[RMDB]
RNA sequence: GGGAACGACUCGAGUAGAGUCGAAAACUGCGCUGAGCCCUUCUCCCCCAGCUUGCCUGUGUCCUAGGGAAUUGGAAGGUCAUCCUUCACAGGAUCGUGUGGAAGUCCUGCUCGGGGCGGAGGCAUUAUAAACCUUAGACGUUCGCGUCUAAGGUAAUCUAAUGCCCUUGUUCGCAAGGGCAUUAGAAAAAGAAACAACAACAACAAC
Reactivity to DMS in 0.01 (KOAc 150mM, MgCl2 10mM, bicine 150mM(pH8.5), 24C), signal-to-noise 1, nucleotides 027 to 156: c040u000g030c040g020c020u000g000a120g000c050c010c010u010u010c040u010c000c020c000c030c020a120g000c040u020u000g000c020c020u010g030u010g020u000c060c030u020a170g030g030g020a080a120u000u000g030g010a070a060g050g060u000c120a130u010c030c000u010u020c040a110c060a070g010g010a050u010c080g020u010g000u000g000g010a130a020g010u000c030c000u000g000c050u000c050g000g010g040g000c060g060g020a050g000g010c020a050u000u000a090u000a080a140a040c010c000u000u000a000g010a000c000g030u010u020c300g040c030g040u000c000u000a020a000g010g020u010a000a020
Reactivity to 2A3 in 0.01 (KOAc 150mM, MgCl2 10mM, bicine 150mM(pH8.5), 24C), signal-to-noise 2, nucleotides 027 to 156: c070u040g000c040g040c130u200g050a030g010c000c010c020u080u010c040u030c000c050c000c000c010a010g000c000u030u030g050c000c000u200g020u020g010u230c020c060u020a070g030g030g040a080a110u120u060g030g020a030a000g010g050u210c050a200u230c020c000u080u040c000a010c010a050g000g000a040u090c060g030u180g040u050g150g050a060a000g020u030c000c010u000g000c020u010c000g000g000g000g000c010g040g000a020g000g000c000a010u000u090a030u060a020a080a000c010c000u000u000a000g000a000c020g020u020u020c110g060c000g060u010c000u000a000a000g010g000u000a000a000
An RNA of 207 nucleotides, treated with DMS and 2A3 and read out base by base. The DMS profile rests on 3,167 reads. The 2A3 profile rests on 858 reads. The RNA was probed in 150 mM KOAc, 10 mM MgCl2 and 150 mM bicine (pH 8.5) at 24 C. It was measured as part of the RMDB library M2RFPK. Reactivities are given for positions 27 through 156.